[RMDB]
Background
This 177-nucleotide RNA was probed chemically with 2A3 and DMS. DMS adducts were read by reverse transcription with MarathonRT. The RNA was probed in 150 mM KOAc, 10 mM MgCl2 and 150 mM bicine (pH 8.5) at 24 C. The 2A3 profile rests on 1,142 reads. DMS (dimethyl sulfate) methylates the pairing face of unpaired adenines and cytosines. 2A3 adducts were read by reverse transcription with SuperScript II with manganese.

RNA sequence: GGGAACGACUCGAGUAGAGUCGAAAAGAGUAGAACCUCAGCUAUCUAUACGAUUGGAUCCUAGGAUCCCUCUUAUUGGUAUGGAUCCGCAUAGGAUCCGGAUCCGUAAGGCAGAGGAUCCGCAAGGAGUGAUCUUCUACUUCGGUAGAAGAUCACUAAAAGAAACAACAACAACAAC
Reactivity to 2A3 in 0.01 (KOAc 150mM, MgCl2 10mM, bicine 150mM(pH8.5), 24C), signal-to-noise 1, nucleotides 027 to 126: g070a010g020u120a010g010a030a050c020c010u010c010a030g080c010u050a000u050c030u080a240u030a190c020g050a030u040u060g060g030a030u000c000c000u020a080g050g000a000u010c010c080c000u000c020u050u170a160u150u300g040g010u090a030u050g030g010a010u000c000c000g020c030a230u220a030g010g000a000u000c000c000g000g010a000u020c000c000g020u010a000a010g000g000c000a020g040a060g030g000a030u000c000c000g000c010a020a010g100g110
Reactivity to DMS in 0.01 (KOAc 150mM, MgCl2 10mM, bicine 150mM(pH8.5), 24C), signal-to-noise 2, nucleotides 027 to 126: g000a160g000u000a090g010a070a140c070c010u010c050a080g020c010u010a060u040c090u000a080u000a050c080g010a060u000u000g010g000a040u000c020c000u000a100g010g000a020u010c000c010c070u000c010u000u000a110u000u000g020g000u010a100u000g010g000a010u020c000c000g010c280a140u020a060g020g010a010u000c010c000g000g000a040u010c020c070g020u000a020a060g000g000c090a100g010a050g040g020a020u000c010c000g030c240a050a100g000g010